[RMDB]
RNA sequence: GGGAACGACUCGAGUAGAGUCGAAAAAUGAAGGUAGGUAAAUAGGAGAGUCAGGGCCAGGACUCCCUCCCCUGAGCCCAGGAUAACCUUAAGAAUAGGGUGGCACAAAUAAAGUACGACUGUGAAAGGAGUUUCUCACAUUCGUGUGAGGAAUUCCAAAAGAAACAACAACAACAAC
Reactivity to 2A3 in 0.01 (KOAc 150mM, MgCl2 10mM, bicine 150mM(pH8.5), 24C), signal-to-noise 9, nucleotides 027 to 126: a010u180g030a060a020g050g010u100a020g040g030u070a050a070a130u100a100g050g030a070g000a020g110u030c040a040g000g010g000c010c010a010g010g030a020c030u040c030c000c000u030c010c010c000c000u010g020a030g000c010c010c010a000g030g000a020u050a060a070c020c000u070u070a090a050g090a130a080u120a130g040g000g000u020g040g000c050a020c020a050a100a030u230a080a110a010g050u060a030c070g050a050c100u050g020u070g170a090a050a070
Reactivity to DMS in 0.01 (KOAc 150mM, MgCl2 10mM, bicine 150mM(pH8.5), 24C), signal-to-noise 9, nucleotides 027 to 126: a070u040g010a070a070g010g010u010a050g000g000u010a030a060a080u020a050g000g010a080g010a090g010u000c020a080g010g000g000c020c030a040g000g010a070c060u000c010c010c020u010c130c100c000c010u000g010a110g000c000c000c000a070g000g010a050u010a100a060c020c020u000u010a070a100g010a070a080u030a050g000g010g010u010g000g000c060a050c080a050a060a070u030a040a070a080g000u020a050c120g000a040c070u000g000u010g000a080a090a110